[RMDB]
RNA sequence: GGGAACGACUCGAGUAGAGUCGAAAACGAAGUUUCGACUUCGAAUUAUCCUAAGUCGAUGUCGUUUGACGACCGUUGGAGUCGGGUGUCGGAAACGACACUCGACUAUGAAGACGGUCCGAGACAUCGAUAUGGACCGCCUCCCGUUCGCGGGAAACCUUAAAUGCGCAUUCGUGCGCAUUUAAGGAAAAGAAACAACAACAACAAC
Reactivity to 2A3 in 0.01 (KOAc 150mM, MgCl2 10mM, bicine 150mM(pH8.5), 24C), signal-to-noise 4, nucleotides 027 to 156: c010g000a010a000g020u040u120u300c210g140a070c010u000u010c000g000a020a070u190u100a050u100c010c010u050a100a050g000u010c000g000a000u010g020u000c050g060u080u210u280g110a130c060g020a000c000c000g000u010u030g050g070a010g000u000c000g000g010g010u000g000u000c020g000g030a090a070a050c000g000a000c000a000c000u000c000g000a000c000u010a080u040g040a020a010g020a000c000g010g010u000c010c000g000a030g000a000c000a000u000c000g000a000u000a030u050g000g000a020c030c010g070c010c060u040c020c010c000g030u060u090c170g000c040g120g030g000a120a070a070